RNA sequence: GGGAACGACUCGAGUAGAGUCGAAAAUGCCAAAAACUUUUAAAAAUUAGUGAUCUGUUCCCCAAACCCCCAUUCAAUAAGAAAGGUCUACCUGUAGCUCACAGUCACAGCUAUUAGAGCUGUCCUUACGCAUCGAUAUUUUCGAAUAUCGAUGCGUAAAAGAAACAACAACAACAAC
Reactivity to 2A3 in 0.01 (KOAc 150mM, MgCl2 10mM, bicine 150mM(pH8.5), 24C), signal-to-noise 1, nucleotides 027 to 126: u080g160c070c020a080a010a020a000a070c070u300u070u180u300a140a060a020a020a080u200u110a190g050u050g110a040u050c010u010g010u000u030c000c000c000c030a000a040a250c080c000c000c050c000a010u190u140c030a030a210u080a110a000g080a000a000a010g070g000u000c030u080a050c050c000u010g010u040a010g010c000u000c000a110c030a010g040u030c030a010c030a030g010c100u030a100u030u300a040g110a000g070c000u000g000u030c000c000u000u000
Source: RMDB library RFM100, as collected in RNAgym. The record gives the reactivity of an RNA of 177 nucleotides to 2A3. The RNA was probed in 150 mM KOAc, 10 mM MgCl2 and 150 mM bicine (pH 8.5) at 24 C.